[RMDB]
RNA sequence: GGGAACGACUCGAGUAGAGUCGAAAAUGGCAACUGGAACACGACACCUUGCCGUCGCUGCUCAGCACCGGGGCGUAAAACAGCUCGCGGCCCAGCGCGGCCCGCGCCGCUUCGCCGGGGUCGGCCACAUAAACAGGUAAUUCGUUACCUGUUUAUGAAAAGAAACAACAACAACAAC
Reactivity to 2A3 in 0.01 (KOAc 150mM, MgCl2 10mM, bicine 150mM(pH8.5), 24C), signal-to-noise 9, nucleotides 027 to 126: u090g020g000c020a050a030c130u080g020g050a120a030c080a020c140g100a020c010a060c030c010u020u050g000c020c010g030u040c030g000c030u070g010c010u040c120a030g020c040a040c030c030g020g010g020g000c020g020u060a080a100a040a070c040a020g010c020u020c030g120c030g020g010c010c000c000a090g060c040g010c070g030g010c010c030c010g040c030g020c010c010g020c000u100u090c050g020c050c010g020g010g000g010u030c000g010g020c010c010a050
Reactivity to DMS in 0.01 (KOAc 150mM, MgCl2 10mM, bicine 150mM(pH8.5), 24C), signal-to-noise 9, nucleotides 027 to 126: u010g010g000c020a050a060c070u000g000g010a080a090c100a200c110g000a100c120a070c040c030u000u000g010c040c020g010u000c070g020c080u000g000c070u010c060a080g010c080a090c060c040g010g010g010g000c030g010u000a040a050a070a110c150a080g010c030u000c030g010c060g010g010c040c020c020a140g010c120g010c080g010g000c030c020c060g010c100g010c040c040g010c060u000u010c070g010c060c030g000g000g010g010u000c100g010g000c030c060a150